[RMDB]
RNA sequence: GGGAACGACUCGAGUAGAGUCGAAAAGGACCGUCCCCUCGGUAAUGGCGAAUGGGACCCACAAACCUCUCUAGAUUCCGAUAGAGAAUCGAGAGGAAAGUGGCUCUCCCUUAGCCAUCCGAGUGGAAUAACGCCCGUUUCGACGGGCGUAAAAGAAACAACAACAACAAC
Reactivity to DMS in 0.01 (KOAc 150mM, MgCl2 10mM, bicine 150mM(pH8.5), 24C), signal-to-noise 4, nucleotides 027 to 129: g010g030a120c000c000g000u040c010c000c030c010u000c030g040g060u050a040a040u000g000g010c000g000a130a070u020g020g030g040a080c240c050c000a000c000a010a120a300c000c010u010c000u060c060u050a130g030a040u010u010c000c080g070a150u100a120g100a000g030a010a020u000c010g010a040g180a010g010g070a000a030a240g000u000g000g080c040u040c000u010c020c020c010u040u000a270g020c020c000a000u040c000c030g040a030g010u000g020g010a040a050u000a110
Reactivity to 2A3 in 0.01 (KOAc 150mM, MgCl2 10mM, bicine 150mM(pH8.5), 24C), signal-to-noise 4, nucleotides 027 to 129: g070g070a060c030c000g030u010c010c000c020c000u000c000g000g040u050a020a020u020g030g000c020g020a050a050u040g020g000g000a070c110c030c000a020c010a000a220a060c020c000u060c010u010c000u050a030g000a020u020u000c010c020g130a140u150a180g240a040g000a070a010u000c000g010a000g000a000g000g000a000a090a000g000u000g000g010c000u000c010u000c000c010c000u010u020a020g000c000c000a000u000c000c000g000a000g000u020g000g000a020a020u080a030